Chemical mapping of a 177-nucleotide RNA with DMS and 2A3. For DMS, 3,567 sequencing reads were counted. Conditions: 150 mM KOAc, 10 mM MgCl2 and 150 mM bicine (pH 8.5), 24 C. It was measured as part of the RMDB library TTRDEL. Values cover nucleotides 27 to 126.
RNA sequence: GGGAACGACUCGAGUAGAGUCGAAAAGAUAUGGAUUCAAGGAGCUCAGGUUCGGAAACGAACCAUGAGCGCGAAACUUGAUCCUAAGUCAAAUCGAAGGUAAACCGUUCGCGGUUUACCUUCGAAAGAUGAUACAGUGGUUCGCCACUGUAUCAUCAAAAGAAACAACAACAACAAC
Reactivity to DMS in 0.01 (KOAc 150mM, MgCl2 10mM, bicine 150mM(pH8.5), 24C), signal-to-noise 3, nucleotides 027 to 126: g000a050u020a300u010g000g000a020u000u010c000a000a000g000g010a190g010c000u000c000a030g000g000u000u000c010g010g000a070a090a230c000g020a010a010c000c000a030u000g000a000g010c000g020c180g010a070a120a170c010u000u000g000a040u000c000c000u000a040a110g010u000c040a060a110a140u000c000g010a010a000g000g010u000a000a010a010c010c000g010u000u010c160g020c010g020g000u000u000u000a000c000c000u000u000c000g000a000a020a090
Reactivity to 2A3 in 0.01 (KOAc 150mM, MgCl2 10mM, bicine 150mM(pH8.5), 24C), signal-to-noise 3, nucleotides 027 to 126: g020a030u070a020u190g000g010a060u210u260c030a000a020g030g010a070g050c000u000c000a020g000g010u030u000c010g000g050a090a100a050c010g000a020a000c000c010a150u000g000a010g000c010g000c000g170a200a110a050c010u010u010g000a010u000c000c000u020a160a040g060u050c050a030a030a150u040c010g000a000a000g000g010u010a000a000a000c030c000g020u070u090c300g010c000g140g000u010u000u000a000c000c000u000u000c000g000a000a000a000